[RMDB]
RNA sequence: GGGAACGACUCGAGUAGAGUCGAAAAUAAAUGUUCGCAUUUAAUUAUAACCUUUGUGCAGUGGAGUAUAGAGGUUCGAAGUGGGACACCCAUUGGGUGUCCACGUAGUUCUAUACGUUGAAACUGCACUCUGGUGAUCCUGAUACUUCGGUAUCAAGUUAGCCUCUCAUUUCGAUGAGAGGCUAACAAAAGAAACAACAACAACAAC
Reactivity to 2A3 in 0.01 (KOAc 150mM, MgCl2 10mM, bicine 150mM(pH8.5), 24C), signal-to-noise 1, nucleotides 027 to 156: u060a000a000a000u020g000u090u170c130g000c100a010u050u030u100a280a190u120u140a040u010a140a010c000c010u030u000u000g000u010g000c010a000g000u000g000g030a100g000u000a000u000a000g090a010g040g170u100u120c010g130a100a120g010u050g110g210g020a010c000a000c000c000c070a150u290u300g070g010g000u000g000u000c040c000a000c000g010u010a000g000u000u010c000u000a000u000a010c000g160u080u020g000a000a000a000c000u000g000c030a000c000u000c000u000g000g000u000g010a000u000c010c010u000g000a000u000a010c020u050u070c300g210g000u080a000u070c000a000a040
The data come from the RNA Mapping Database (RMDB), library RNAMAK. This 207-nucleotide RNA was probed chemically with 2A3. For 2A3, 529 sequencing reads were counted.